[RMDB]
RNA sequence: GGGAACGACUCGAGUAGAGUCGAAAAGAUAUGGAAUACUCUAAGGCUAGGCUCAGUGUUCGGAAACGAACACGGAGCCUUGGACCCUUAGAGGUAUUCCUAAGUCAAAGUGACGUUCGCGUCACAAGAUUGGGGUAUGGUUCGCCAUACCCCAAUCAAAAGAAACAACAACAACAAC
Reactivity to DMS in 0.01 (KOAc 150mM, MgCl2 10mM, bicine 150mM(pH8.5), 24C), signal-to-noise 2, nucleotides 027 to 126: g000a050u010a300u030g000g000a020a000u010a020c000u000c000u000a000a010g030g010c040u020a010g010g030c000u000c020a040g030u000g020u000u000c010g000g010a130a100a250c000g010a000a000c000a010c000g010g000a010g000c000c000u000u010g020g000a150c300c010c000u010u020a020g010a000g010g000u000a000u000u000c000c000u030a010a110g000u000c030a140a170a140g000u000g000a020c000g010u000u010c240g000c030g020u000c000a020c020a140a070
The record gives the reactivity of an RNA of 177 nucleotides to DMS. Conditions: 150 mM KOAc, 10 mM MgCl2 and 150 mM bicine (pH 8.5), 24 C. Source: RMDB library TTRDES, as collected in RNAgym.